[RMDB]
RNA sequence: GGGAACGACUCGAGUAGAGUCGAAAAGGCGUAGCCGACAACAUGCCCAGGUAGCCCAGACCUUCAAGGCUACGGUGCGUUGCGACGUACGGUCUGAUUCUUCACAACGACGUUCACCGCGUCUUCUACAACCGGCAAAGAUUCGUCUUUGCCGGAAUCUACUGAUGGGAUUCGUCCCAUCAGUAGAAAAAGAAACAACAACAACAAC
Reactivity to DMS in 0.01 (KOAc 150mM, MgCl2 10mM, bicine 150mM(pH8.5), 24C), signal-to-noise 1, nucleotides 027 to 156: g020g020c040g010u000a110g010c030c000g000a150c070a070a060c000a050u010g030c010c000c090a150g060g040u000a060g010c050c020c130a090g020a200c050c070u000u000c130a130a220g000g000c000u000a020c020g020g000u000g030c030g000u000u000g020c050g010a070c040g030u000a060c080g010g000u000c010u000g000a150u000u020c080u000u010c040a110c080a070a110c000g000a090c020g000u000u000c020a050c060c010g050c020g000u000c050u020u010c030u000a090c100a110a130c020c000g020g030c000a000a040a020g000a060u000u000c270g000u000c000u000u000u000g000c000c000g010g000a000a000
Reactivity to 2A3 in 0.01 (KOAc 150mM, MgCl2 10mM, bicine 150mM(pH8.5), 24C), signal-to-noise 4, nucleotides 027 to 156: g050g000c100g060u070a040g040c060c010g050a040c050a090a000c010a060u180g020c000c010c020a010g020g070u000a010g010c010c020c110a060g020a040c050c030u100u050c070a080a020g000g000c000u000a010c000g000g000u030g000c000g000u000u030g050c100g100a030c010g000u010a010c010g000g010u050c010u020g040a090u130u080c060u120u180c100a060c070a240a070c050g020a010c000g040u130u200c090a070c190c030g030c010g020u010c060u070u000c020u090a100c030a120a100c000c000g000g030c010a000a020a010g020a020u050u120c140g030u010c120u000u020u020g010c000c000g010g010a000a000